Structure probing data (2A3 and DMS) for a 177-nucleotide construct. High 2A3 reactivity points to a flexible backbone, as in loops and unpaired stretches. The data come from the RNA Mapping Database (RMDB), library TTRDEL. The DMS profile rests on 6,935 reads. Conditions: 150 mM KOAc, 10 mM MgCl2 and 150 mM bicine (pH 8.5), 24 C. Reactivities are given for positions 27 through 126.
RNA sequence: GGGAACGACUCGAGUAGAGUCGAAAAGAUAUGGAGUACACGAGCCAGUCGUUUGACGUCGGAAACGACCGAGACUGGAACUACUCGGUACUCCUAAGUCAAAGGCCCGAGGUUCGCCUCGGGCCAAUCUAACAAGUAAGUUCGCUUACUUGUUAGAAAAAGAAACAACAACAACAAC
Reactivity to 2A3 in 0.01 (KOAc 150mM, MgCl2 10mM, bicine 150mM(pH8.5), 24C), signal-to-noise 2, nucleotides 027 to 126: g010a000u100a020u170g000g000a020g020u040a000c300a070c100g000a000g000c020c010a000g000u000c030g090u110u220u230g070a070c020g000u020c010g000g050a120a080a080c050g010a010c030c000g050a060g000a050c000u010g000g050a020a010c020u120a020c000u020c010g020g010u000a010c000u000c010c000u000a030a000g020u000c010a130a000a140g000g020c020c000c010g020a020g010g030u140u250c300g100c120c000u000c020g020g070g020c000c000a010a020
Reactivity to DMS in 0.01 (KOAc 150mM, MgCl2 10mM, bicine 150mM(pH8.5), 24C), signal-to-noise 5, nucleotides 027 to 126: g010a040u000a300u010g000g000a010g010u000a000c010a110c020g000a010g000c010c000a000g000u000c000g010u010u000u010g010a110c300g000u000c020g000g000a120a100a160c020g010a000c000c020g000a070g020a010c000u000g000g000a020a020c050u010a300c020u000c010g010g020u000a010c000u000c000c000u000a000a050g000u000c040a080a110a160g000g020c000c000c000g010a010g000g020u000u010c260g010c010c000u000c010g010g000g010c000c000a000a020